[RMDB]
The record gives the reactivity of an RNA of 207 nucleotides to 2A3. It was measured as part of the RMDB library RNAMAK.
RNA sequence: GGGAACGACUCGAGUAGAGUCGAAAAGUAGUUUCGACUACGUAGGCGGGGUCACGAGACAAGAGGCACAGACAUGCUCUGAAGCCUCCACGGAGCAACAGCUGUGCUCCCCACCUUGUCCGUGACGGAGGCACCCUUUGCUCACAUUCGUGUGAAACAAGCAGUUCAGGUUCGCCUGAACUGCUUGAAAAGAAACAACAACAACAAC
Reactivity to 2A3 in 0.01 (KOAc 150mM, MgCl2 10mM, bicine 150mM(pH8.5), 24C), signal-to-noise 1, nucleotides 027 to 156: g160u090a020g030u040u080u130c170g010a050c010u070a110c050g020u040a110g140g130c110g000g040g040g010u000c000a000c010g200a240g000a060c000a000a000g030a040g060g020c000a020c000a000g050a060c060a200u270g000c030u000c000u040g020a110a010g000c000c010u000c010c010a040c010g040g000a000g000c060a020a070c000a210g070c000u010g010u000g000c070u050c060c000c020c020a030c000c000u000u000g000u000c020c000g000u000g000a000c000g000g010a010g000g000c000a010c010c030c000u040u160u170g070c050u090c030a030c010a000u170u090c260g050u040g010u040g010a020a070a110